[RMDB]
RNA sequence: GGGAACGACUCGAGUAGAGUCGAAAACCCGUUCAUUUCGAUGAACGGGAGUGGGUAACCCUAGGACCAGUAGUGGGACCGGUAGUGGCCGUGGGACCAGUAAAGAGUUAACAUUCGUGUUAACUAAACCCCAAAGAAGUUUCGACUUCUUUGGGGUAAAAGAAACAACAACAACAAC
Reactivity to DMS in 0.01 (KOAc 150mM, MgCl2 10mM, bicine 150mM(pH8.5), 24C), signal-to-noise 3, nucleotides 027 to 126: c000c000c000g010u000u000c000a010u000u000u010c180g020a010u000g000a010a000c010g000g010g010a030g020u010g010g000g010u000a100a120c040c020c020u000a160g000g010a190c020c050a040g000u000a080g010u000g000g000g000a100c070c030g000g000u010a090g010u000g010g000c020c030g020u000g000g000g010a130c040c020a080g020u020a080a090a140g010a000g010u000u000a000a000c010a030u000u010c230g040u000g000u000u000a010a010c000u000a020a070
Reactivity to 2A3 in 0.01 (KOAc 150mM, MgCl2 10mM, bicine 150mM(pH8.5), 24C), signal-to-noise 1, nucleotides 027 to 126: c000c000c000g000u000u010c000a030u000u060u100c170g130a010u010g000a000a000c000g000g030g010a040g010u110g070g040g060u050a160a180c010c000c070u030a060g000g120a110c010c030a040g110u110a010g090u200g060g060g080a130c000c000g040g000u110a150g030u000g090g010c010c010g010u060g000g000g030a060c010c020a020g010u090a090a090a000g140a010g010u000u000a010a030c010a020u040u130c190g060u000g030u020u000a010a000c000u010a050a070
Chemical mapping of a 177-nucleotide RNA with DMS and 2A3. 2A3 adducts were read by reverse transcription with SuperScript II with manganese. Conditions: 150 mM KOAc, 10 mM MgCl2 and 150 mM bicine (pH 8.5), 24 C.